[RMDB]
RNA sequence: GGGAACGACUCGAGUAGAGUCGAAAAACGUUGAUAUGGAUUUACUCCGAGGAGACGAACUACCACGAACAGGGCAAACUCUACCCGUGGCGUCUCCGUUUGACGAGUAAGUCGUAAGUCAACAUGCAAGGAGGUACGUUCGCGUACCUCAAAAGAAACAACAACAACAAC
Reactivity to DMS in 0.01 (KOAc 150mM, MgCl2 10mM, bicine 150mM(pH8.5), 24C), signal-to-noise 5, nucleotides 027 to 129: a130c140g010u000u000g020a010u030a150u130g000g030a050u050u010u010a010c020u020c030c030g000a060g000g000a000g020a040c020g030a090a040c090u080a210c000c020a040c040g000a060a210c140a080g050g020g030c240a110a060a110c090u000c000u030a020c220c000c010g010u010g000g000c020g090u020c020u000c000c000g020u010u000u050g010a110c300g000a000g010u010a020a000g010u030c000g030u050a010a080g010u000c020a010a010c000a120u060g040c080a060a090g090
Reactivity to 2A3 in 0.01 (KOAc 150mM, MgCl2 10mM, bicine 150mM(pH8.5), 24C), signal-to-noise 8, nucleotides 027 to 129: a000c090g000u000u000g010a010u000a060u250g110g000a000u000u020u010a000c000u000c020c010g000a040g000g000a000g030a000c000g030a080a070c100u160a060c100c000a010c010g020a090a030c050a110g020g030g040c070a060a100a270c050u050c030u090a030c000c000c030g000u000g000g000c010g000u000c010u000c000c000g010u040u040u080g010a000c010g000a000g010u000a000a000g000u000c000g010u030a050a010g010u000c000a000a000c010a030u150g040c040a070a100g180